Conditions: 150 mM KOAc, 10 mM MgCl2 and 150 mM bicine (pH 8.5), 24 C. The record gives the reactivity of an RNA of 177 nucleotides to 2A3. The data come from the RNA Mapping Database (RMDB), library OK1LIB.
[RMDB]
RNA sequence: GGGAACGACUCGAGUAGAGUCGAAAACAGCAGAAGAGGUCGACUUAUCAAAGGAUCUCCCUCACUGGAACAAGCUUAAAGCAGAUGAGAAGUACUUCAUCUCUCACAUCUUAGCCUUUUUUGCAGCGAGGACAUCCUUCUUCGGAAGGAUGUCCUCAAAAGAAACAACAACAACAAC
Reactivity to 2A3 in 0.01 (KOAc 150mM, MgCl2 10mM, bicine 150mM(pH8.5), 24C), signal-to-noise 2, nucleotides 027 to 126: c010a040g050c000a000g070a020a030g000a030g000g070u130c130g140a140c040u050u120a020u260c060a020a020a020g100g000a000u070c020u120c010c000c000u000c030a020c050u040g000g000a070a050c080a220a000g030c030u090u180a100a000a000g020c010a010g010a050u070g000a030g000a210a000g020u110a160c090u120u100c060a180u000c010u010c000u030c000a020c020a160u110c030u040u140a060g000c000c010u040u000u000u000u020u240g000c000a050g030c010